[RMDB]
RNA sequence: GGGAACGACUCGAGUAGAGUCGAAAAUCCGGCCCCAAAGGAGGAGAGUCCCGCCAGGGGUGAUCCACCCGGAGAUGAGCGGAGAAACCACAUCCAGAGGACCCCUUCGACGAACAGAAGACCCUGGGAACUCGCUAUUUCGAUAGCGAGAAAAGAAACAACAACAACAAC
Reactivity to 2A3 in 0.01 (KOAc 150mM, MgCl2 10mM, bicine 150mM(pH8.5), 24C), signal-to-noise 9, nucleotides 027 to 129: u020c000c000g050g030c020c000c010c020a070a100a030g040g010a020g010g000a040g010a020g050u030c010c000c010g050c060c050a060g010g000g000g000u010g010a020u000c030c010a050c030c030c000g040g010a060g010a080u120g030a020g040c020g020g020a040g050a110a060a020c040c030a040c020a100u070c030c020a040g050a150g060g020a090c040c010c020c020u040u050c020g070a110c040g050a180a060c030a090g020a020a010g040a070c010c000c000u010g010g000g020a020a020
Reactivity to DMS in 0.01 (KOAc 150mM, MgCl2 10mM, bicine 150mM(pH8.5), 24C), signal-to-noise 8, nucleotides 027 to 129: u030c040c010g000g000c020c020c000c050a060a070a100g020g020a060g000g020a020g000a160g030u020c030c000c030g000c170c150a070g000g000g020g000u000g000a120u030c040c010a020c060c020c040g000g000a130g020a090u020g040a040g050c040g000g010a080g030a100a090a150c080c050a070c080a110u030c010c020a040g030a090g030g020a080c060c050c060c020u000u010c050g000a100c070g000a070a060c100a000g000a090a040g030a040c040c010c010u000g030g050g000a020a190
The data come from the RNA Mapping Database (RMDB), library 15KLIB. Structure probing data (2A3 and DMS) for a 170-nucleotide construct. Values are in units of 0.01, from 0 to 300, in steps of 10.